[RMDB]
The record gives the reactivity of an RNA of 177 nucleotides to 2A3 and DMS. Source: RMDB library OK2TRN, as collected in RNAgym. 2A3 adducts were read by reverse transcription with SuperScript II with manganese. For DMS the reverse transcriptase was MarathonRT.
RNA sequence: GGGAACGACUCGAGUAGAGUCGAAAAAGUAGUAAGACUGAUCUCGCAGUAGGUGCAUUAUCUACCUUUGUCAAUUUGAAAAUGCAACAGGAGUGUAUCGCAUCUUGUUAUGAGGUAAAGGUUAAGAGCAUCCGCUUAGAUUCGUCUAAGCGGAUGCAAAAGAAACAACAACAACAAC
Reactivity to 2A3 in 0.01 (KOAc 150mM, MgCl2 10mM, bicine 150mM(pH8.5), 24C), signal-to-noise 1, nucleotides 027 to 126: a000g140u110a000g040u070a130a000g020a010c020u030g030a070u020c020u010c010g000c040a000g070u110a040g000g040u000g040c020a010u060u010a060u070c010u020a270c000c010u080u000u010g120u120c050a100a180u030u020u100g110a120a260a020a020u100g010c010a010a010c000a040g000g030a040g100u070g020u040a080u080c160g000c020a040u000c010u010u010g000u060u030a150u250g000a000g000g040u080a140a090a020g100g000u000u080a060a010g040a010
Reactivity to DMS in 0.01 (KOAc 150mM, MgCl2 10mM, bicine 150mM(pH8.5), 24C), signal-to-noise 2, nucleotides 027 to 126: a100g000u000a070g010u000a110a090g010a100c030u000g000a090u000c010u000c010g010c070a140g020u010a000g010g000u000g030c010a060u000u000a070u010c010u010a100c000c000u000u000u020g000u030c050a070a090u000u010u000g010a100a100a140a090u000g000c010a050a030c180a010g000g020a100g000u000g020u010a010u000c160g020c010a030u000c010u010u000g020u000u000a040u010g060a130g010g020u020a060a020a110g020g000u000u010a050a140g020a070